[RMDB]
RNA sequence: GGGAACGACUCGAGUAGAGUCGAAAAACUGCUACCUCCCUUAUGGGAAACAGGACAAACGAAGAGCUUCCGCCGAUGGAGCGUCGUUUACUGGGCAAUGCGAUGUGGAAUUCUUCGGGGUAUUAAAGUUUUGAAACAGUUUCGACUGUUUCAAAACAAAAGAAACAACAACAACAAC
Reactivity to DMS in 0.01 (KOAc 150mM, MgCl2 10mM, bicine 150mM(pH8.5), 24C), signal-to-noise 2, nucleotides 027 to 126: a130c030u000g000c010u000a100c130c020u000c000c010c020u000u020a070u050g020g000g030a040a100a120c060a010g040g000a180c140a060a020a090c050g000a000a000g000a190g030c060u000u000c000c060g020c080c150g060a090u060g000g000a080g000c020g000u000c010g000u020u000u010a060c020u020g010g000g040c100a100a090u050g000c020g000a040u010g040u020g000g010a130a050u010u010c030u000u010c040g000g000g020g020u010a070u000u000a060a120a200
Reactivity to 2A3 in 0.01 (KOAc 150mM, MgCl2 10mM, bicine 150mM(pH8.5), 24C), signal-to-noise 6, nucleotides 027 to 126: a010c020u040g020c030u050a080c020c010u040c040c010c000u170u160a250u300g040g000g000a020a080a020c030a040g020g090a080c070a030a060a000c020g030a030a020g070a050g100c020u090u040c030c040g110c090c100g110a120u160g000g040a040g030c010g010u020c000g000u000u020u040a070c050u050g010g060g000c030a070a030u090g050c020g040a060u050g040u070g090g040a090a090u090u030c010u060u020c040g020g000g010g020u030a070u060u210a100a080a050
An RNA of 177 nucleotides, treated with DMS and 2A3 and read out base by base. 2A3 adducts were read by reverse transcription with SuperScript II with manganese. DMS adducts were read by reverse transcription with MarathonRT. Reactivities are given for positions 27 through 126. It was measured as part of the RMDB library OK1LIB. The RNA was probed in 150 mM KOAc, 10 mM MgCl2 and 150 mM bicine (pH 8.5) at 24 C.